This 177-nucleotide RNA was probed chemically with 2A3.
Source: RMDB library RFM100, as collected in RNAgym.
The RNA was probed in 150 mM KOAc, 10 mM MgCl2 and 150 mM bicine (pH 8.5) at 24 C.
RNA sequence: GGGAACGACUCGAGUAGAGUCGAAAAAAUUCAUCAUUAUGCACACCAAAGUAAAGAUUGUGUGCUCGAAACUUGGAUUCAAUUACUUUUUCGUCAAAACAUACCAAAACUCUCUCACUUUUAAAAGUACGUUCGUAGCUUUCGAGCUACGAACGUAAAAAGAAACAACAACAACAAC
Reactivity to 2A3 in 0.01 (KOAc 150mM, MgCl2 10mM, bicine 150mM(pH8.5), 24C), signal-to-noise 1, nucleotides 027 to 126: a000a000u220u150c000a070u000c000a000u030u140a020u070g000c000a000c000a000c000c090a180a180a000g060u020a110a140a040g210a030u170u050g000u020g000u000g020c000u000c070g030a020a030a030c090u000u280g100g030a030u140u000c150a000a020u170u000a070c000u000u160u000u000u050c030g040u070c000a040a040a090a250c040a150u100a000c030c060a000a000a070a070c000u020c000u000c000u000c000a100c010u050u140u000u100a030a000a000a120g030